An RNA of 207 nucleotides, treated with 2A3 and DMS and read out base by base. Reactivities are rounded to 0.1 and cut off at 0 and 3. For DMS, 4,128 sequencing reads were counted. The RNA was probed in 150 mM KOAc, 10 mM MgCl2 and 150 mM bicine (pH 8.5) at 24 C. Values cover nucleotides 27 to 156.
RNA sequence: GGGAACGACUCGAGUAGAGUCGAAAACAGGAGGUUAGCAUAGCUCCAUUCUACUAUGCAGCUAGUCGUCGUUUUCGACGUCUAGGAUAGACCGCUACAGCAGGGUCAAUGAACUGCUGAUUACCGCGUCUCGUAGCGCGGGUUCUGGCUACGUACACACGUCCCUAAUAUUCGUAUUAGGGACGUGAAAAGAAACAACAACAACAAC
Reactivity to 2A3 in 0.01 (KOAc 150mM, MgCl2 10mM, bicine 150mM(pH8.5), 24C), signal-to-noise 1, nucleotides 027 to 156: c030a000g030g000a000g000g010u160u090a000g000c010a030u000a000g000c000u020c050c030a090u160u160c040u040a150c000u000a000u020g000c010a020g000c000u000a000g000u010c000g010u000c000g050u040u170u200u300c050g030a000c010g000u020c000u000a010g030g000a000u070a070g000a000c010c000g030c060u120a030c020a000g000c020a020g000g070g000u060c110a000a180u130g070a080a010c000u000g000c000u000g020a010u000u050a030c000c020g000c000g000u000c060u030c140g040u060a020g020c010g000c000g020g010g020u040u090c080u090g060g040c010u010a050c050g020u080a020c050a030
Reactivity to DMS in 0.01 (KOAc 150mM, MgCl2 10mM, bicine 150mM(pH8.5), 24C), signal-to-noise 2, nucleotides 027 to 156: c050a150g000g000a040g010g020u000u000a060g000c020a000u000a000g010c000u000c120c300a250u000u000c050u000a000c000u000a020u000g020c010a300g020c020u000a010g010u010c000g000u010c000g020u020u020u010u000c010g030a030c040g020u000c010u000a020g020g010a140u000a130g000a060c020c020g020c040u000a140c000a030g000c010a030g000g000g030u010c040a140a140u000g010a090a100c010u000g010c020u010g020a230u010u000a040c050c000g030c050g060u000c030u000c180g010u000a170g010c020g040c000g020g010g010u000u000c090u010g030g000c040u000a120c020g000u010a140c110a260